[RMDB]
RNA sequence: GGGAACGACUCGAGUAGAGUCGAAAACUCCUAUAGUUCGCUAUAGGAGAAAAUAAAAAGCACGAAAAACAUCUGGGCCUAACGUGCAGGCCAAAUAGUAAAAAAUCCAUUGCUUCGGCAAUGGAAACAUACUGACUAGGUUCGCCUAGUCAGUAUGAAAAGAAACAACAACAACAAC
Reactivity to 2A3 in 0.01 (KOAc 150mM, MgCl2 10mM, bicine 150mM(pH8.5), 24C), signal-to-noise 2, nucleotides 027 to 126: c000u000c010c000u000a000u000a020g010u010u070c190g000c070u000a010u000a010g010g000a010g010a020a130a010a000u100a010a080a010a000a010g010c010a010c050g210a190a030a040a120a060c070a110u120c140u250g050g010g000c000c000u020a110a020c010g000u000g000c000a000g000g010c000c000a010a030a020u080a020g100u070a010a040a040a030a040a070u000c000c000a000u000u010g000c000u020u050c200g080g000c000a000a010u000g000g010a000a000a000
Reactivity to DMS in 0.01 (KOAc 150mM, MgCl2 10mM, bicine 150mM(pH8.5), 24C), signal-to-noise 3, nucleotides 027 to 126: c000u000c000c010u010a000u000a020g000u000u030c250g040c000u000a010u000a010g000g010a000g000a030a040a050a100u000a050a060a070a120a160g000c010a000c000g000a100a100a080a070a070c280a120u030c160u010g020g000g000c020c000u000a070a190c000g010u000g000c000a050g000g000c000c000a040a070a060u000a100g020u030a000a020a060a110a070a060u000c000c000a000u000u000g000c000u000u000c200g030g000c000a010a000u000g020g000a000a010a070